The record gives the reactivity of an RNA of 177 nucleotides to DMS and 2A3. For DMS the reverse transcriptase was MarathonRT. 2A3 adducts were read by reverse transcription with SuperScript II with manganese. The 2A3 profile rests on 2,881 reads. Source: RMDB library TTRDEL, as collected in RNAgym. Conditions: 150 mM KOAc, 10 mM MgCl2 and 150 mM bicine (pH 8.5), 24 C.

RNA sequence: GGGAACGACUCGAGUAGAGUCGAAAAGAUAUGGACUCCCAUGUAGCAUCGAUCUCGGAAACGAGGGAGCUAGAUGGAGAGUCCUAAGUCAAACAACAAGUGACAUGUUCGCAUGUCACUUGUUGAAGAAACUACUGUUCUUCGGAACAGUAGUUUCAAAAGAAACAACAACAACAAC
Reactivity to DMS in 0.01 (KOAc 150mM, MgCl2 10mM, bicine 150mM(pH8.5), 24C), signal-to-noise 2, nucleotides 027 to 126: g000a020u010a300u000g010g000a020c000u000c000c000c000a010u000g000u000a010g000c000a300u010c180g000a050u010c000u000c000g000g000a070a070a180c000g000a020g000g020g000a020g050c000u000a010g000a000u010g010g000a100g000a000g000u000c010c000u000a010a060g010u010c040a160a130a290c010a010a010c000a020a000g010u000g010a020c000a000u000g010u000u030c200g000c000a000u000g000u000c000a000c000u000u000g000u000u000g010a070a110
Reactivity to 2A3 in 0.01 (KOAc 150mM, MgCl2 10mM, bicine 150mM(pH8.5), 24C), signal-to-noise 1, nucleotides 027 to 126: g000a000u030a040u130g000g000a010c000u020c040c010c050a010u200g050u060a010g010c030a110u300c100g070a100u030c040u000c010g010g070a050a070a060c020g000a020g010g000g000a010g000c010u040a020g020a210u020g000g010a160g030a000g250u000c010c000u010a000a000g000u010c010a040a010a070c000a010a000c020a000a010g000u000g010a010c000a000u010g130u000u180c300g010c220a010u000g030u000c000a000c000u000u000g010u010u000g000a000a010